[RMDB]
RNA sequence: GGGAACGACUCGAGUAGAGUCGAAAAUGUGCAGCGGCAGGUGAUGGGAGUUGCCGAGUCCACAGCGCUGUAGACUGCGCCGCAUUAGAAGCCUGGCCUCCUGAUGCUGUGCUCUUCAUCUAGACCCAAGCCCCAGGUCGUGGGACGAUUUCUCCCACACCCCUACGUCAUUCGUGACGUAGGGGUGAAAAGAAACAACAACAACAAC
Reactivity to 2A3 in 0.01 (KOAc 150mM, MgCl2 10mM, bicine 150mM(pH8.5), 24C), signal-to-noise 1, nucleotides 027 to 156: u120g070u020g000c000a020g030c040g120g000c000a040g000g090u100g070a110u050g070g030g040a060g000u120u170g040c020c020g090a050g010u060c040c000a000c020a020g010c030g040c160u060g080u130a050g000a170c230u080g010c020g010c020c000g070c000a040u080u070a080g000a100a000g000c020c150u200g070g100c000c000u000c000c020u020g000a010u060g000c010u030g000u030g000c000u010c000u150u020c050a170u030c070u120a020g020a030c080c000c020a040a000g020c040c000c010c000a070g000g020u060c050g020u040g040g010g000a010c070g060a000u040u100u000c000u000c000c000c000a010

This 207-nucleotide RNA was probed chemically with 2A3. Conditions: 150 mM KOAc, 10 mM MgCl2 and 150 mM bicine (pH 8.5), 24 C.